[RMDB]
RNA sequence: GGGAACGACUCGAGUAGAGUCGAAAAGGAAUACCGCCCUCGCCGCACCGGCGUCCUAACCCCGUCCCGUGGAGCCGGGCGGGGGACCGUGCCAGGUGGGCAGUUUGACUGGGGCGGUCGCCUCCUACCGAAAAAUGCUUUUCGAAGCAUUUUUCGGAAAAGAAACAACAACAACAAC
Reactivity to DMS in 0.01 (KOAc 150mM, MgCl2 10mM, bicine 150mM(pH8.5), 24C), signal-to-noise 1, nucleotides 027 to 126: g030g000a130a020u020a030c000c000g000c000c000c000u000c240g020c050c000g040c040a020c010c000g000g030c000g000u030c010c060u010a050a300c010c000c000c000g040u020c000c000c000g040u000g060g080a090g000c190c070g010g010g010c010g000g010g000g000g000a000c240c290g010u020g000c010c010a110g020g010u000g000g000g000c000a120g010u030u000u080g010a100c050u010g000g020g000g000c000g000g000u000c300g000c000c030u000c000c000u020a080
Reactivity to 2A3 in 0.01 (KOAc 150mM, MgCl2 10mM, bicine 150mM(pH8.5), 24C), signal-to-noise 3, nucleotides 027 to 126: g010g000a090a040u040a090c010c000g000c000c000c020u040c080g020c000c010g180c030a000c010c010g000g010c000g090u060c000c010u030a040a040c010c000c000c010g120u270c010c010c010g020u130g190g060a080g100c040c010g000g000g000c000g000g000g000g000g010a010c000c020g000u000g000c000c010a030g000g000u000g000g030g000c000a010g020u060u160u300g130a100c100u100g000g000g000g020c000g000g000u000c000g030c010c000u010c000c000u040a070